[RMDB]
RNA sequence: GGGAACGACUCGAGUAGAGUCGAAAAGGAUCGACCGGACCGCCCAGUUCGCCUCGGGCGCCAUAGUCUUCAGCAUCGGCGUGUUGACCGCAGAGACCGGGGCGGGGGUCGUGGCUGCCGCGGCCGGAUUGCAUCCUGAUUUCGAUCAGGAUGCAAUAAAAGAAACAACAACAACAAC
Reactivity to 2A3 in 0.01 (KOAc 150mM, MgCl2 10mM, bicine 150mM(pH8.5), 24C), signal-to-noise 4, nucleotides 027 to 126: g070g040a120u080c020g050a030c030c000g020g120a110c010c000g000c010c020c000a030g030u060u090c030g030c020c010u030c010g000g070g000c010g020c020c020a050u090a030g040u040c040u140u100c100a070g010c020a090u120c130g110g000c030g010u040g110u070u150g070a100c000c020g020c070a040g050a000g030a170c000c020g000g000g000g010c020g000g000g000g000g000u060c030g000u030g030g000c020u030g000c000c020g030c000g020g020c010c000g010g030
Reactivity to DMS in 0.01 (KOAc 150mM, MgCl2 10mM, bicine 150mM(pH8.5), 24C), signal-to-noise 3, nucleotides 027 to 126: g020g000a140u020c020g000a100c010c020g000g000a160c020c020g000c020c110c000a130g020u010u030c070g030c030c030u020c040g000g020g020c020g040c040c040a110u030a140g010u030c030u050u040c100a080g030c020a130u040c110g010g030c020g030u030g020u010u040g020a090c050c060g000c090a130g000a220g000a050c040c000g000g000g000g030c000g000g000g010g000g010u000c060g010u000g000g020c010u000g010c080c070g000c000g010g000c010c010g010g010
Chemical mapping of a 177-nucleotide RNA with 2A3 and DMS. For 2A3 the reverse transcriptase was SuperScript II with manganese. The RNA was probed in 150 mM KOAc, 10 mM MgCl2 and 150 mM bicine (pH 8.5) at 24 C. For DMS the reverse transcriptase was MarathonRT.